An RNA of 177 nucleotides, treated with 2A3 and DMS and read out base by base. Values cover nucleotides 27 to 126. Values are in units of 0.01, from 0 to 300, in steps of 10.
RNA sequence: GGGAACGACUCGAGUAGAGUCGAAAACGGGGCAACUCAACCCAGCGUUGAAUACCUGUUCGACGACAGCAUUUCCACAUUGCAGGACGACGGCGACUCGGUGCGGGUGACCUUUGAGCGCGCGGCGAGUGCUAGGGUGAUUCGUCACCCUAGCACUAAAAGAAACAACAACAACAAC
Reactivity to 2A3 in 0.01 (KOAc 150mM, MgCl2 10mM, bicine 150mM(pH8.5), 24C), signal-to-noise 3, nucleotides 027 to 126: c030g000g010g030g000c090a060a080c030u060c030a010a090c000c000c030a040g080c050g050u020u030g050a070a040u130a240c020c030u110g030u060u060c040g050a040c030g050a080c040a040g030c040a080u040u050u060c040c000a050c050a150u040u230g060c020a030g030g000a020c010g000a000c010g080g000c000g070a100c010u020c070g050g010u060g060c070g010g040g000u040g040a090c010c000u050u110u160g060a040g040c030g000c010g010c000g020g040c030g040
Reactivity to DMS in 0.01 (KOAc 150mM, MgCl2 10mM, bicine 150mM(pH8.5), 24C), signal-to-noise 4, nucleotides 027 to 126: c090g000g000g000g030c120a080a090c090u000c030a090a140c030c020c070a120g010c130g020u010u010g000a060a050u000a080c120c040u000g000u000u000c040g010a090c060g010a100c110a050g010c060a070u000u010u000c020c030a100c130a080u000u010g020c060a070g000g010a070c050g000a060c050g000g010c020g010a070c050u000c060g010g010u000g000c090g010g000g010u010g000a070c080c030u000u000u000g010a080g010c050g000c040g010c040g000g000c060g010